[RMDB]
RNA sequence: GGGAACGACUCGAGUAGAGUCGAAAACGAGGUGCGGUAGGCCUCGUUAACAAACCGCAAAAAAAUAGUCGCAAACGACGAAAACGACGCACUCGCAGCUUAAUAACCUGCGCUGAGCCCUUCUCCCAAAACUGAGGUAGGUUCGCCUACCUCAGAAGACUGAACAAAUCUUCGGAUUUGUUCAGUCAAAAGAAACAACAACAACAAC
Reactivity to 2A3 in 0.01 (KOAc 150mM, MgCl2 10mM, bicine 150mM(pH8.5), 24C), signal-to-noise 2, nucleotides 027 to 156: c000g000a000g000g000u090g070c060g020g030u080a030g080g040c010c000u000c000g060u030u000a020a010c010a000a040a010c010c030g010c060a010a060a050a020a000a040a150u160a050g000u020c020g020c110a120a140a080c060g060a010c020g060a080a030a030a040c080g060a020c060g000c000a030c020u050c010g030c010a010g000c010u050u020a070a000u020a060a070c000c000u020g020c010g030c120u050g010a010g010c010c000c030u100u070c000u020c000c000c010a040a060a040a040c010u000g000a000g000g000u000a000g000g000u030u030c070g070c050c000u000a000c000c000u000c000a000g000a000a000